Structure probing data (DMS and 2A3) for a 207-nucleotide construct. For 2A3, 9,642 sequencing reads were counted. The reactions ran in a buffer of 150 mM KOAc, 10 mM MgCl2 and 150 mM bicine (pH 8.5), at 24 C. For DMS, 11,641 sequencing reads were counted.

[RMDB]
RNA sequence: GGGAACGACUCGAGUAGAGUCGAAAACAACCUGGGAGUUACGUCCGGAUAUUGCACCAGGAGCAAUAGAACGGUAGACAUCAACUGAUGCGAGAGCAUCUCAACUUAUGGACCUUAGUGUAUCGCAAGACGACAGGUCCGGUCGGAAUUGCGUAGACCAUAUAUACUGCUUCGGCAGUAUAUAUGGAAAAGAAACAACAACAACAAC
Reactivity to DMS in 0.01 (KOAc 150mM, MgCl2 10mM, bicine 150mM(pH8.5), 24C), signal-to-noise 5, nucleotides 027 to 156: c060a070a300c000c020u000g000g010g000a150g010u000u000a050c070g030u010c010c010g000g010a190u000a060u000u010g000c010a120c080c120a170g020g020a260g000c010a050a060u000a040g010a110a120c030g010g030u000a110g000a080c060a110u000c080a090a150c070u010g010a020u000g020c010g020a280g000a300g020c000a020u000c010u000c050a040a110c070u010u010a080u010g050g010a020c000c020u000u000a110g020u010g020u000a090u000c040g010c180a090a140g010a190c040g010a060c130a030g040g040u010c000c000g030g000u000c020g010g010a110a100u000u010g010c040g020u010a180g010a220
Reactivity to 2A3 in 0.01 (KOAc 150mM, MgCl2 10mM, bicine 150mM(pH8.5), 24C), signal-to-noise 9, nucleotides 027 to 156: c050a010a070c010c010u040g030g020g010a070g040u090u080a040c050g040u030c030c000g000g010a040u030a020u030u050g000c040a050c090c070a160g110g050a040g010c010a020a020u040a040g120a190a040c020g020g000u030a040g050a090c030a080u110c040a050a100c070u110g000a010u010g000c010g010a060g000a020g050c000a030u010c010u010c040a040a130c030u150u120a050u180g030g020a010c010c010u070u110a070g040u050g050u160a060u110c030g000c030a010a030g060a070c010g000a010c010a040g090g000u020c020c000g000g000u010c010g010g060a140a090u040u040g000c010g010u050a010g040a050